Conditions: 150 mM KOAc, 10 mM MgCl2 and 150 mM bicine (pH 8.5), 24 C. Structure probing data (DMS and 2A3) for a 177-nucleotide construct. It was measured as part of the RMDB library OK2TST. DMS adducts were read by reverse transcription with MarathonRT.
RNA sequence: GGGAACGACUCGAGUAGAGUCGAAAACCCGAACUCAAGCUGGACACGACGCUCAGCCCCGAGCGCCUGCUGGCGCGGGUGCUCACGCCCGAACGCAUGUCGGCGCUGACCCUGGUCGACUACAUCAAUCCAUAAUCCCAUUCGUGGGAUUAUGGAUAAAAGAAACAACAACAACAAC
Reactivity to DMS in 0.01 (KOAc 150mM, MgCl2 10mM, bicine 150mM(pH8.5), 24C), signal-to-noise 5, nucleotides 027 to 126: c000c000c010g010a090a110c130u010c080a090a100g000c050u000g000g000a100c050a100c080g010a100c070g000c050u000c030a080g010c040c030c050c060g000a040g000c020g020c010c010u000g030c030u000g020g010c190g010c060g010g000g010u000g010c070u010c100a070c120g020c030c010c030g010a070a090c060g020c050a070u000g020u010c130g000g000c020g010c060u010g010a090c050c020c020u000g010g000u010c030g000a050c060u000a070c090a050u000c140a100
Reactivity to 2A3 in 0.01 (KOAc 150mM, MgCl2 10mM, bicine 150mM(pH8.5), 24C), signal-to-noise 3, nucleotides 027 to 126: c000c000c000g030a080a040c050u060c150a050a010g020c040u050g010g050a030c010a010c120g160a030c040g000c020u030c030a030g020c000c010c010c030g030a010g000c020g020c000c010u040g010c030u120g040g030c060g000c000g020g000g010u030g020c030u060c040a060c060g020c000c010c030g050a120a020c030g010c040a020u070g040u060c010g020g020c010g000c030u020g030a060c010c020c020u040g060g020u040c030g040a050c020u080a020c030a110u110c070a080